[RMDB]
RNA sequence: GGGAACGACUCGAGUAGAGUCGAAAAUCUUUCCACUCUUCUGAUGCUAAGGGCUGAGUUAAGGGAUUAUGUAAACAUGUACAGGUGACAUCAAGGGAGACAAAGAGUUCAUGAACUAGAAUCCUACGUUCAGACUCUAGUUCGCUAGAGUCUGAACAAAAGAAACAACAACAACAAC
Reactivity to 2A3 in 0.01 (KOAc 150mM, MgCl2 10mM, bicine 150mM(pH8.5), 24C), signal-to-noise 1, nucleotides 027 to 126: u000c000u000u010u030c000c040a010c020u090c020u100u080c030u060g090a050u080g010c030u060a040a100g040g010g000c000u020g050a030g060u080u080a060a060g100g000g050a060u060u000a130u110g110u090a030a040a050c040a060u040g000u170a000c020a010g060g040u030g090a020c010a070u000c000a020a100g090g000g010a070g010a020c040a020a150a020g050a020g010u000u020c040a110u120g030a040a030c010u000a030g070a090a050u010c020c010u040a040c070
Reactivity to DMS in 0.01 (KOAc 150mM, MgCl2 10mM, bicine 150mM(pH8.5), 24C), signal-to-noise 2, nucleotides 027 to 126: u030c130u000u000u000c020c040a150c100u000c060u000u000c050u000g000a070u000g010c080u020a060a070g000g000g040c050u000g000a120g000u000u000a090a110g020g010g030a120u020u010a060u020g000u000a120a110a080c100a060u000g020u000a080c110a050g000g030u000g000a090c090a070u010c070a050a120g000g000g030a110g010a050c110a010a070a060g000a080g020u000u000c030a040u020g000a020a040c060u000a050g040a070a120u000c010c010u000a120c150